[RMDB]
RNA sequence: GGGAACGACUCGAGUAGAGUCGAAAAGCUAGCCAGCGCACGAUGAGACUGCCGUGACGUCUAGCCUGCGUCUCAAAUAGUCUCCAUCAAUCAAAACGCUGGGAUUGAUGUACGAGACUAGUACACAGUGUUGUGACUAGUUCGCUGGUCGCAACACAAAAGAAACAACAACAACAAC
Reactivity to DMS in 0.01 (KOAc 150mM, MgCl2 10mM, bicine 150mM(pH8.5), 24C), signal-to-noise 9, nucleotides 027 to 126: g010c030u010a070g010c060c020a040g010c040g010c060a060c100g010a060u020g000a090g010a070c050u020g030c120c130g010u000g000a060c040g000u030c040u000a090g000c040c040u020g010c050g000u010c010u000c050a080a090a130u020a010g000u000c000u000c030c040a000u000c010a040a050u010c060a060a070a110a130c110g000c070u010g000g000g000a030u010u000g010a030u000g000u020a090c120g000a060g020a040c020u000a030g010u030a080c150a080c170a110
Reactivity to 2A3 in 0.01 (KOAc 150mM, MgCl2 10mM, bicine 150mM(pH8.5), 24C), signal-to-noise 9, nucleotides 027 to 126: g030c030u040a010g040c020c030a020g010c020g010c030a020c060g050a050u160g020a040g060a100c070u120g080c070c030g040u050g050a130c020g030u060c020u030a030g010c000c010u040g020c030g040u000c000u010c020a070a110a030u090a010g000u000c000u000c020c000a010u010c000a000a030u030c020a010a060a080a110c120g040c120u130g050g020g000a010u010u030g010a010u010g020u070a050c070g000a010g020a040c030u030a030g060u080a020c100a010c030a060

Chemical mapping of a 177-nucleotide RNA with DMS and 2A3.
For 2A3 the reverse transcriptase was SuperScript II with manganese.